Source: RMDB library OK1LIB, as collected in RNAgym. This 177-nucleotide RNA was probed chemically with 2A3 and DMS. The RNA was probed in 150 mM KOAc, 10 mM MgCl2 and 150 mM bicine (pH 8.5) at 24 C.
RNA sequence: GGGAACGACUCGAGUAGAGUCGAAAAACAUGCUACCAUGGACCGUACAGAGGGCAGCGCGCCCGUGAGAUGGAGCGAAUCCCUGCCAGCGGGUCCCAGUUCGGCUCGCCCUAUGCACCUCGACGGCAGUAAAUAUGAAUUUCGAUUCAUAUUUACUAAAAGAAACAACAACAACAAC
Reactivity to 2A3 in 0.01 (KOAc 150mM, MgCl2 10mM, bicine 150mM(pH8.5), 24C), signal-to-noise 9, nucleotides 027 to 126: a000c050a050u140g020c030u090a110c050c010a060u070g050g020a050c010c020g040u140a070c050a070g090a090g020g020g010c020a030g060c040g010c020g010c020c000c010g020u060g030a180g020a050u150g020g020a050g020c030g020a030a050u060c010c000c010u020g050c020c020a030g020c020g020g010g010u020c010c010c000a040g020u070u090c020g020g000c020u020c030g030c010c000c000u050a070u100g020c030a070c030c000u020c020g040a030c010g030g010c010
Reactivity to DMS in 0.01 (KOAc 150mM, MgCl2 10mM, bicine 150mM(pH8.5), 24C), signal-to-noise 9, nucleotides 027 to 126: a100c110a060u030g000c070u010a070c070c020a050u010g000g010a150c050c030g010u010a100c110a120g010a070g000g000g020c040a100g010c090g010c100g000c030c000c020g000u010g010a150g010a090u020g000g000a080g000c040g010a110a090u010c030c030c010u010g000c060c050a150g000c030g000g000g010u000c020c020c040a120g010u010u010c080g010g000c020u000c050g000c040c020c050u010a070u020g010c050a080c030c010u000c030g010a070c070g000g000c110